[RMDB]
RNA sequence: GGGAACGACUCGAGUAGAGUCGAAAAGGGUUGGCUGGCAGAGGAAGGGAAGGGUCCGGGGUCGGCUGAGCAUGCCCUCAGGUUGCUCACUGUUCUUCCCUAGAAUGUCAGGUGAUGUGUCACCCCACGUAAGUGGUACCUUCGGGUACCACUUACGAAAAGAAACAACAACAACAAC
Reactivity to DMS in 0.01 (KOAc 150mM, MgCl2 10mM, bicine 150mM(pH8.5), 24C), signal-to-noise 1, nucleotides 027 to 126: g020g010g000u010u000g000g000c060u000g020g010c040a040g000a070g010g000a120a020g010g010g020a020a060g000g000g050u010c080c130g020g000g020g010u010c050g030g000c150u000g020a010g010c050a080u010g020c080c090c070u010c140a070g040g010u000u000g000c050u010c010a070c120u010g010u000u000c040u000u000c000c000c010u010a160g010a050a060u000g000u010c020a010g020g010u000g000a070u000g030u040g000u000c100a100c000c000c030c020a160
Reactivity to 2A3 in 0.01 (KOAc 150mM, MgCl2 10mM, bicine 150mM(pH8.5), 24C), signal-to-noise 1, nucleotides 027 to 126: g000g040g000u050u040g000g000c070u020g000g000c030a010g030a040g090g030a100a050g030g000g020a010a050g050g030g010u000c010c030g010g000g020g010u050c040g020g000c020u040g010a010g040c050a080u220g050c010c030c000u080c030a070g180g100u060u060g000c010u000c000a150c020u050g020u080u000c000u010u040c010c020c010u040a060g050a070a050u060g050u030c030a000g040g160u040g040a040u040g070u000g010u100c030a040c000c000c000c000a020